[RMDB]
RNA sequence: GGGAACGACUCGAGUAGAGUCGAAAAGAGAUGGAUUGUGAUGCACUCACCAGCUCAGAUGCCAGAGGUAAUUCCUUACUUGCUGGUGCUCUAGAAGCUGUCAGCCGUCGCCCCGUUUUUAGGGAGAUGAUCCGAAGGAGUUCGCUCCUUCGGAUCAAAAAGAAACAACAACAACAAC
Reactivity to DMS in 0.01 (KOAc 150mM, MgCl2 10mM, bicine 150mM(pH8.5), 24C), signal-to-noise 2, nucleotides 027 to 126: g000a120g010a010u000g000g000a160u020u000g000u000g000a030u010g000c160a190c130u000c020a050c030c040a060g000c020u010c010a050g000a020u000g000c000c000a030g010a070g010g000u000a020a050u000u000c240c280u000u000a030c010u000u000g010c000u000g000g010u000g000c240u000c020u000a110g020a030a040g000c020u000g020u000c210a190g000c030c010g000u000c020g000c070c010c000c120g000u010u010u000u000u000a080g030g000g020a090g020a120
Reactivity to 2A3 in 0.01 (KOAc 150mM, MgCl2 10mM, bicine 150mM(pH8.5), 24C), signal-to-noise 1, nucleotides 027 to 126: g120a000g000a000u030g000g020a030u040u230g000u020g040a040u130g110c100a040c100u040c010a000c000c000a000g000c000u000c020a020g000a040u020g000c020c000a010g000a030g020g000u000a070a030u260u300c070c030u000u040a010c000u020u080g300c000u050g040g000u020g000c060u000c000u030a210g000a180a030g020c000u000g050u080c010a060g040c000c010g010u030c010g000c020c000c000c000g020u100u100u000u010u130a060g020g010g000a110g000a000